[RMDB]
RNA sequence: GGGAACGACUCGAGUAGAGUCGAAAACAUGAUGAGUCGGAUGCUGGGAGAGUCCUACUACAAGUCGUAUGGACUCAAUGACAACUCCAAGAUCUCUUACAUUCUGUCACAGAUUAGUGGGAAGUACGCCGUAACCUAUCUUCGGAUAGGUUACGGCAAAAGAAACAACAACAACAAC
Reactivity to DMS in 0.01 (KOAc 150mM, MgCl2 10mM, bicine 150mM(pH8.5), 24C), signal-to-noise 1, nucleotides 027 to 126: c180a100u040g000a050u040g000a010g010u000c000g000g020a070u010g060c020u010g000g050g000a110g010a000g040u000c000c000u000a030c110u010a100c200a060a030g000u060c090g000u000a030u060g000g060a000c000u000c050a080a090u000g030a110c080a080a070c080u030c070c070a180a030g050a090u010c000u000c110u030u050a030c060a120u000u000c000u000g010u000c020a090c110a120g000a040u080u000a100g030u000g000g030g000a040a090g000u030a130c200
Reactivity to 2A3 in 0.01 (KOAc 150mM, MgCl2 10mM, bicine 150mM(pH8.5), 24C), signal-to-noise 3, nucleotides 027 to 126: c050a060u160g010a010u040g020a010g020u130c000g070g000a020u050g040c050u070g000g040g020a140g000a010g000u010c030c000u040a110c000u050a070c110a160a150g110u100c050g060u120a070u220g040g000a000c000u000c010a000a010u060g030a020c020a000a030c070u000c020c000a010a020g030a050u010c040u000c000u040u010a060c030a100u130u020c000u080g130u180c040a000c010a150g130a160u080u210a100g070u040g000g010g030a050a090g010u050a040c110